[RMDB]
RNA sequence: GGGAACGACUCGAGUAGAGUCGAAAAAGGAAUACGUUCAACGACUAUUCUGUAUAGACGACAGAAGUAAAGCUCCAAGUGAUUGGGAGAAGAAAAAUCUUUACCCUAGUCUUAGGGAUAACAAAUAGUCUGCACACGUCUUGAAAAGGAGUGCUAGCUCUAACAACAGUUUCGACUGUUGUUAGAGAAAAGAAACAACAACAACAAC
Reactivity to DMS in 0.01 (KOAc 150mM, MgCl2 10mM, bicine 150mM(pH8.5), 24C), signal-to-noise 3, nucleotides 027 to 156: a100g010g010a080a040u000a010c100g020u010u010c020a200a100c090g010a040c010u000a040u000u000c010u000g010u010a150u000a090g030a060c030g020a250c020a090g010a090a110g020u000a070a100a140g010c020u000c010c010a050a110g020u000g000a200u010u000g020g010g010a300g020a070a070g030a000a040a080a110a100u000c040u000u000u010a150c000c000c000u000a090g010u000c100u000u000a050g030g010g010a070u010a060a060c070a010a060a090u010a070g010u000c030u010g030c050a050c080a100c020g000u020c040u020u000g000a040a080a120a080g000g010a130g000u010g020c050u000a110g010
Reactivity to 2A3 in 0.01 (KOAc 150mM, MgCl2 10mM, bicine 150mM(pH8.5), 24C), signal-to-noise 6, nucleotides 027 to 156: a000g130g020a120a020u110a090c090g010u040u110c090a150a030c060g040a010c020u020a020u040u000c020u010g020u020a080u080a110g050a030c040g020a030c020a020g040a060a000g030u070a060a080a030g030c020u000c020c010a060a040g050u050g110a150u090u190g050g020g030a040g050a050a030g060a050a120a070a020a040u050c040u070u050u080a110c000c010c000u030a040g040u010c010u060u050a050g010g010g030a050u080a090a020c020a000a060a020u040a020g020u010c030u050g010c020a030c000a000c030g050u020c000u060u060g050a080a050a020a000g070g030a050g020u090g020c060u080a020g030
Conditions: 150 mM KOAc, 10 mM MgCl2 and 150 mM bicine (pH 8.5), 24 C.
An RNA of 207 nucleotides, treated with DMS and 2A3 and read out base by base.
For 2A3, 4,140 sequencing reads were counted.